[RMDB]
RNA sequence: GGGAACGACUCGAGUAGAGUCGAAAACUCUGGUGAGGCCCUAUCUAGUAUAGCAAUCCACCAAGCAGGUGAAUUCACACAAUUCAGGUUCUCAGAGAAAAUGCGCCCUGACUUGACAGGUAUGGUCGAGUACGCUACGAUUCGUCGUAGCGUACUCAAAAGAAACAACAACAACAAC
Reactivity to DMS in 0.01 (KOAc 150mM, MgCl2 10mM, bicine 150mM(pH8.5), 24C), signal-to-noise 2, nucleotides 027 to 126: c020u000c070u000g040g000u080g000a040g010g000c160c200c000u000a070u000c070u010a080g040u060a120u000a010g000c010a070a150u000c050c000a010c030c000a060a120g000c060a050g000g040u000g000a130a000u000u000c000a140c140a280c040a050a000u000u030c000a070g000g010u000u000c000u010c000a090g000a040g060a130a000a010a180u020g000c170g010c300c040c000u000g000a040c070u000u020g020a070c030a130g000g000u000a010u050g000g010u000c070
Reactivity to 2A3 in 0.01 (KOAc 150mM, MgCl2 10mM, bicine 150mM(pH8.5), 24C), signal-to-noise 3, nucleotides 027 to 126: c020u020c020u040g120g020u110g040a030g000g040c000c000c000u000a050u010c050u020a020g100u080a070u000a070g040c060a020a010u010c010c000a000c010c000a100a010g100c110a110g070g000u020g010a000a020u050u070c010a040c000a000c040a100a060u080u080c020a030g060g000u000u040c030u000c000a010g040a000g050a070a110a000a050u120g000c030g020c020c000c000u010g020a060c000u070u070g010a000c020a090g070g020u040a050u120g050g000u010c070
The data come from the RNA Mapping Database (RMDB), library OK1LIB. This 177-nucleotide RNA was probed chemically with DMS and 2A3.